[RMDB]
RNA sequence: GGGAACGACUCGAGUAGAGUCGAAAAGGCUGCUGCCGGAGCCGAUACCGGAAUACGAGACCUCAUGUGCGGUCGAAUGCACUGAAGUACGAAAGUACGAAGAGGUCAUACCGAGGACCGAGACUCGAUAUGCUCGCUAGAUGGAGCUUUACAUCAACGAUCCAGUAUGGUUCGCCAUACUGGAUCGAAAAGAAACAACAACAACAAC
Reactivity to DMS in 0.01 (KOAc 150mM, MgCl2 10mM, bicine 150mM(pH8.5), 24C), signal-to-noise 1, nucleotides 027 to 156: g060g000c040u000g040c020u010g000c010c030g030g020a030g030c020c010g010a120u000a150c030c020g000g050a130a210u000a060c020g000a220g000a040c000c000u030c000a300u000g080u000g020c020g010g020u000c190g000a130a110u000g020c000a040c010u010g010a060a280g040u010a050c000g000a200a080a200g090u000a020c000g020a100a200g000a100g000g010u010c000a070u000a070c040c000g040a090g030g010a240c120c040g000a100g000a180c020u000c020g010a090u010a030u010g010c020u000c010g000c060u000a100g010a100u000g000g000a010g030c010u050u030u000a020c130a040u000c000a070a210
Reactivity to 2A3 in 0.01 (KOAc 150mM, MgCl2 10mM, bicine 150mM(pH8.5), 24C), signal-to-noise 2, nucleotides 027 to 156: g020g000c030u090g000c070u040g020c050c010g010g010a000g000c050c060g060a070u030a070c010c020g030g080a060a070u120a120c130g030a030g020a090c000c000u010c000a030u030g020u000g020c040g030g070u100c010g090a090a040u170g000c000a020c010u090g060a080a000g000u000a010c020g040a200a020a010g000u000a000c000g020a060a000g020a030g000g000u030c030a000u060a040c030c020g030a010g000g080a030c020c090g050a050g030a140c000u000c010g070a050u010a010u090g020c030u000c010g000c050u050a020g020a090u010g020g020a000g070c000u090u070u010a080c050a030u040c010a040a090
This 207-nucleotide RNA was probed chemically with DMS and 2A3. The 2A3 profile rests on 1,140 reads. Conditions: 150 mM KOAc, 10 mM MgCl2 and 150 mM bicine (pH 8.5), 24 C. Reactivities are given for positions 27 through 156.